[RMDB]
The data come from the RNA Mapping Database (RMDB), library OK3TST. Chemical mapping of a 207-nucleotide RNA with DMS and 2A3. For 2A3 the reverse transcriptase was SuperScript II with manganese. For DMS the reverse transcriptase was MarathonRT.

RNA sequence: GGGAACGACUCGAGUAGAGUCGAAAAGGAUUGAACGUUCGCGUUCAAUCCAAGGAUCACGGAGACGUGAUCCGAUUCAUAGAUUCUGAGAGCGGAAGAAUCUGCUGAGACUAGACUGACUUUCGAGUGAGUAGAGUCUGAGCUAUACACCGCAGGAGGUGUGGCCAUCGUUCGCGAUGGUUACACCAAAAGAAACAACAACAACAAC
Reactivity to DMS in 0.01 (KOAc 150mM, MgCl2 10mM, bicine 150mM(pH8.5), 24C), signal-to-noise 3, nucleotides 027 to 156: g030g020a010u000u000g010a020a010c000g020u000u000c290g000c030g020u000u000c000a000a000u000c010c000a040a040g000g000a020u000c000a040c000g020g010a300g010a300c010g090u000g010a020u010c020c000g010a040u000u000c100a170u000a060g010a080u000u000c010u000g010a200g000a180g010c050g000g000a230a090g000a040a070u000c050u000g030c030u000g020a070g020a040c010u000a040g000a050c030u000g010a030c010u000u010u010c230g010a050g020u010g000a030g020u000a030g010a040g010u000c020u010g000a020g020c020u010a120u000a110c100a120c010c030g000c040a230g000g000a200
Reactivity to 2A3 in 0.01 (KOAc 150mM, MgCl2 10mM, bicine 150mM(pH8.5), 24C), signal-to-noise 5, nucleotides 027 to 156: g000g000a000u010u010g000a000a010c010g000u070u100c260g000c000g130u000u000c020a000a000u000c000c000a000a020g000g000a000u000c000a000c010g020g020a060g030a050c010g010u000g000a000u000c010c000g000a000u030u020c010a030u060a090g020a020u010u040c020u050g070a060g010a010g220c000g010g010a090a020g020a020a040u020c040u020g000c000u040g110a000g000a010c000u000a000g010a040c000u060g050a000c000u110u080u140c260g050a000g000u030g070a000g000u010a010g010a000g010u000c000u000g030a000g000c010u020a030u020a140c170a040c030c020g020c020a020g000g130a060